Description: This 177-nucleotide RNA was probed chemically with 2A3. Reactivities are given for positions 27 through 126. The reactions ran in a buffer of 150 mM KOAc, 10 mM MgCl2 and 150 mM bicine (pH 8.5), at 24 C.
RNA sequence: GGGAACGACUCGAGUAGAGUCGAAAAACGCAUCAAACGCCUAAACAAUAUCGAGGUGAUCGUCCAGCAAUCACUGAAAAUCAACAAUCGGCACAACAUAAUUAUCACGACCGUGAAUUGAUAUUACGAGCCGUCACAAAUUCGUUUGUGACGGCUCAAAAGAAACAACAACAACAAC
Reactivity to 2A3 in 0.01 (KOAc 150mM, MgCl2 10mM, bicine 150mM(pH8.5), 24C), signal-to-noise 1, nucleotides 027 to 126: a000c110g030c000a000u000c000a030a000a000c060g000c000c000u060a210a000a000c050a080a030u100a240u190c040g030a140g000g010u010g070a000u050c010g060u000c000c010a000g100c020a090a000u030c000a000c070u070g140a100a000a000a060u070c100a010a010c000a000a000u030c000g000g000c010a000c030a040a020c000a000u190a300a010u300u170a030u060c000a070c120g130a040c000c070g020u070g060a000a010u000u000g090a000u000a040u250u160a110c260

It was measured as part of the RMDB library OK1LIB.